Background:
Conditions: 150 mM KOAc, 10 mM MgCl2 and 150 mM bicine (pH 8.5), 24 C. Structure probing data (2A3 and DMS) for a 177-nucleotide construct. For 2A3 the reverse transcriptase was SuperScript II with manganese. For 2A3, 2,596 sequencing reads were counted. For DMS the reverse transcriptase was MarathonRT.
[RMDB]
RNA sequence: GGGAACGACUCGAGUAGAGUCGAAAAGUACCUGCUCCCCAGAUUAUGGUGAUAACAGGUUGGCAUUUUAUCCAGCAGGUUGGUUGAACUGUUGUAGCCACCAUUGACCUCACCAACCUUACGGUGGUGACAGGUACUUUUUCGAAAGUACCUGUCAAAAAGAAACAACAACAACAAC
Reactivity to 2A3 in 0.01 (KOAc 150mM, MgCl2 10mM, bicine 150mM(pH8.5), 24C), signal-to-noise 2, nucleotides 027 to 126: g030u040a060c010c000u030g010c000u070c030c010c000c010a000g020a130u080u130a070u270g000g000u030g020a030u040a120a060c030a030g020g000u060u030g030g000c000a020u000u060u000u290a060u130c020c000a000g000c000a000g070g000u070u070g100g050u010u150g060a090a080c060u050g040u090u040g030u080a020g000c010c010a000c000c010a050u040u130g050a070c000c000u040c020a030c000c000a020a050c020c050u080u130a040c070g030g000u030g030g030
Reactivity to DMS in 0.01 (KOAc 150mM, MgCl2 10mM, bicine 150mM(pH8.5), 24C), signal-to-noise 6, nucleotides 027 to 126: g010u000a060c010c000u000g020c040u000c030c020c000c060a140g010a140u010u010a060u000g010g020u000g000a100u010a070a100c080a060g000g000u000u010g030g010c070a140u010u010u020u010a100u010c110c030a050g010c050a040g010g010u000u010g020g000u010u010g000a070a090c100u000g010u000u000g010u000a130g000c060c020a020c030c020a140u010u000g000a090c130c100u000c050a020c010c010a050a050c060c030u000u000a080c140g010g000u000g010g020